[RMDB]
RNA sequence: GGGAACGACUCGAGUAGAGUCGAAAAGAUGCGGUCGCCGAUGUCAACGCAGGCAAGUGUUGUCGAUAUACAGGAGCUGCUGCGUCCAUGGGCGACACAUCGACGCCGCUCGGAAAAGCUGUGCGCACAACCUGGCUACGUUCGCGUAGCCAGGUUGAAAAGAAACAACAACAACAAC
Reactivity to 2A3 in 0.01 (KOAc 150mM, MgCl2 10mM, bicine 150mM(pH8.5), 24C), signal-to-noise 1, nucleotides 027 to 126: g000a010u090g100c230g150g000u000c000g000c000c010g190a000u010g090u080c020a000a010c010g000c010a000g200g030c040a080a000g040u030g120u070u090g220u180c290g150a110u080a020u020a300c000a040g030g030a040g050c010u110g010c000u000g000c060g010u000c030c000a020u000g060g000g000c000g010a000c000a000c000a000u020c000g000a030c000g080c000c010g020c030u050c010g250g130a110a020a000a000g000c000u030g060u060g060c050g000c030a080
Reactivity to DMS in 0.01 (KOAc 150mM, MgCl2 10mM, bicine 150mM(pH8.5), 24C), signal-to-noise 1, nucleotides 027 to 126: g010a000u000g000c150g000g000u000c010g010c000c010g000a020u000g000u000c240a130a020c000g000c030a080g010g010c020a030a300g010u010g010u000u000g000u020c210g000a190u000a150u020a060c050a020g010g050a300g020c000u000g030c050u000g000c000g020u000c170c060a030u000g000g010g010c000g000a030c010a050c000a010u000c000g010a190c130g000c010c010g010c020u000c060g000g030a080a070a160a020g040c010u000g030u000g000c040g050c130a190